[RMDB]
Chemical mapping of a 207-nucleotide RNA with 2A3 and DMS.
Values are in units of 0.01, from 0 to 300, in steps of 10.
Source: RMDB library OK3TST, as collected in RNAgym.
High 2A3 reactivity points to a flexible backbone, as in loops and unpaired stretches.
For DMS the reverse transcriptase was MarathonRT.
For 2A3 the reverse transcriptase was SuperScript II with manganese.
The reactions ran in a buffer of 150 mM KOAc, 10 mM MgCl2 and 150 mM bicine (pH 8.5), at 24 C.
RNA sequence: GGGAACGACUCGAGUAGAGUCGAAAAUCACUCUGGGACGCUUAGAAUUUCAGCGGCCAAAUUUUGAGGUAAGGAAUUAAAUGACGAACUGGUCGUGGCUCAAUUCAAUAUCAUUGAUGUCGUUCUUAAGAGUGAGUUCGAAGAAGAGUGGUAAUGGCUAGAUUGAGAUCUUCGGGUCUUAGUCUAGAAAAGAAACAACAACAACAAC
Reactivity to 2A3 in 0.01 (KOAc 150mM, MgCl2 10mM, bicine 150mM(pH8.5), 24C), signal-to-noise 5, nucleotides 027 to 156: u020c000a000c000u020c010u020g010g020g020a000c000g020c010u060u170a050g030a090a060u070u150u170c040a020g000c020g000g000c000c000a040a040a030u110u110u050u120g070a050g020g060u110a070a070g080g060a050a030u160u140a150a130a100u210g070a030c030g010a080a060c060u030g010g010u000c010g010u020g030g020c030u020c090a020a020u070u020c030a070a040u060a100u240c110a110u040u200g060a030u080g060u150c020g000u000u030c000u030u060a050a000g000a000g000u000g000a000g010u030u100c030g010a020a010g010a010a010g040a020g020u050g010g010u080a070a020u080g050g000
Reactivity to DMS in 0.01 (KOAc 150mM, MgCl2 10mM, bicine 150mM(pH8.5), 24C), signal-to-noise 4, nucleotides 027 to 156: u000c020a020c020u000c020u010g020g020g020a030c040g010c020u000u000a140g020a090a040u000u000u000c060a140g020c000g010g000c010c010a040a090a080u000u000u010u000g010a120g020g000u010a120a150g020g010a140a110u000u010a050a080a100u000g010a150c060g010a070a080c090u000g030g020u010c030g040u000g010g070c060u000c040a040a070u000u000c060a070a150u010a070u000c090a110u000u010g020a070u010g020u000c020g050u010u010c010u000u000a080a080g010a040g020u000g010a060g010u000u000c030g000a080a110g000a060a070g010a070g030u000g010g010u010a050a090u000g010g010